[RMDB]
RNA sequence: GGGAACGACUCGAGUAGAGUCGAAAACCUACUCAAUACGUCCUCGUCGUACAGCACGGUAACAUGUUUUCCGAACAUCCGCGCUUGGGUAUACGAGUAUACACCUUACCCAACCCUCGCCAACGGGAGUGCAUCCACGAGUUCGCUCGUGGAUGAAAUCCAGUUCCUUAUUCGUAAGGAACUGGAUAAAAGAAACAACAACAACAAC
Reactivity to 2A3 in 0.01 (KOAc 150mM, MgCl2 10mM, bicine 150mM(pH8.5), 24C), signal-to-noise 7, nucleotides 027 to 156: c000c000u030a040c030u050c040a050a180u090a160c050g060u040c020c020u040c030g020u020c030g020u060a040c030a040g010c010a020c030g020g060u160a170a060c060a120u080g030u040u040u070u100c070c070g040a050a010c010a020u040c010c020g020c000g020c030u050u070g030g000g030u040a050u010a050c050g020a020g080u020a010u030a030c060a050c010c040u060u080a050c000c000c020a030a070c030c010c010u050c050g080c060c020a100a060c030g030g000g010a050g060u120g040c000a000u000c000c000a000c000g010a010g000u070u050c170g030c070u000c000g000u000g000g010a000u000g000a000a000
Reactivity to DMS in 0.01 (KOAc 150mM, MgCl2 10mM, bicine 150mM(pH8.5), 24C), signal-to-noise 3, nucleotides 027 to 156: c020c020u020a060c030u000c020a080a130u000a060c030g030u000c040c010u000c030g000u010c040g040u000a060c100a130g000c000a040c020g010g000u010a070a130c100a080u000g020u010u010u010u010c080c070g000a070a090c030a080u010c000c000g050c010g000c030u000u000g020g010g020u000a040u000a090c060g020a090g030u000a080u010a100c090a130c040c010u000u000a050c030c000c020a080a090c030c000c020u000c090g010c030c040a070a110c060g000g000g000a100g010u000g030c000a020u010c000c000a000c000g010a040g010u000u000c300g020c020u000c000g050u000g000g010a010u000g000a010a060
Source: RMDB library M2RFPK, as collected in RNAgym. The record gives the reactivity of an RNA of 207 nucleotides to 2A3 and DMS. The 2A3 profile rests on 6,797 reads. For 2A3 the reverse transcriptase was SuperScript II with manganese. The DMS profile rests on 6,746 reads. The reactions ran in a buffer of 150 mM KOAc, 10 mM MgCl2 and 150 mM bicine (pH 8.5), at 24 C.